This 177-nucleotide RNA was probed chemically with DMS and 2A3. DMS adducts were read by reverse transcription with MarathonRT. For 2A3, 1,568 sequencing reads were counted. It was measured as part of the RMDB library OK2TRN. Reactivities are given for positions 27 through 126.
[RMDB]
RNA sequence: GGGAACGACUCGAGUAGAGUCGAAAAAUUAAUUGCAGCCUUACACAAACCGCAGCUGGACGAAUCCGAUUCGAACACACAAAGCCUGUGGUGGCCGGGUGUAAGACGAUGAAGCAGGCAAUCCGUGAUGAUCCAAUAGGUUCGCCUAUUGGAUCAUAAAAGAAACAACAACAACAAC
Reactivity to DMS in 0.01 (KOAc 150mM, MgCl2 10mM, bicine 150mM(pH8.5), 24C), signal-to-noise 4, nucleotides 027 to 126: a090u000u000a080a130u000u020g020c050a130g000c050c000u000u000a030c050a020c060a080a110a100c020c030g000c020a040g000c050u000g010g020a210c030g010a040a020u010c180c130g020a240u000u000c030g020a060a180c040a090c110a070c120a080a130a110g000c190c040u010g040u000g010g020u000g020g020c150c130g000g010g000u000g020u000a040a040g010a040c020g010a120u000g020a080a080g050c050a070g000g010c100a070a060u010c110c060g020u010g020
Reactivity to 2A3 in 0.01 (KOAc 150mM, MgCl2 10mM, bicine 150mM(pH8.5), 24C), signal-to-noise 2, nucleotides 027 to 126: a000u110u040a000a050u060u050g040c040a000g020c010c010u030u030a020c020a020c030a090a210a020c000c010g000c020a010g000c000u060g000g040a030c000g020a040a020u070c220c170g020a040u000u050c000g100a210a020c060a000c020a000c020a220a220a030g020c030c080u040g000u020g040g000u010g010g000c080c020g300g000g000u010g000u010a030a000g020a010c010g030a040u110g080a050a010g020c040a020g110g000c010a030a030u010c030c030g020u060g060